RNA sequence: GGGAACGACUCGAGUAGAGUCGAAAAGAACAGAGAGCGCUGCGAGCGAGGAGUAAGACCAUAGCGAUGGAAAGAGAUGCUAGGAGUAGGGAGAGACCGAAGCGAGGAGGAAAGCAAAGAAAGCAACGAAGGUCGCCCUUCGGGGCGACCAAAAGAAACAACAACAACAAC
Reactivity to 2A3 in 0.01 (KOAc 150mM, MgCl2 10mM, bicine 150mM(pH8.5), 24C), signal-to-noise 1, nucleotides 027 to 129: g000a030a000c090a030g180a000g010a030g060c000g050c110u000g000c010g000a040g000c030g000a010g020g020a120g000u140a000a000g050a010c000c000a070u020a030g050c090g000a000u090g050g000a030a020a000g000a000g000a020u080g160c000u070a030g000g000a140g160u030a010g010g000g010a010g030a000g010a000c000c000g000a000a000g000c000g000a030g020g020a000g000g000a120a000a000g010c130a000a000a250g070a000a080a000g100c000a000a030c120g090a000a030
Reactivity to DMS in 0.01 (KOAc 150mM, MgCl2 10mM, bicine 150mM(pH8.5), 24C), signal-to-noise 1, nucleotides 027 to 129: g020a150a210c070a020g030a010g100a130g000c130g090c200u010g050c000g000a090g040c010g020a130g090g010a040g070u060a060a060g000a130c170c010a090u040a000g000c140g000a080u060g010g000a060a270a000g050a160g050a080u000g040c130u000a130g000g000a060g000u060a130g010g120g070a020g040a000g110a020c000c040g000a010a050g060c250g040a010g020g020a080g000g000a070a060a000g000c300a060a000a090g000a050a020a060g070c060a060a010c160g010a010a280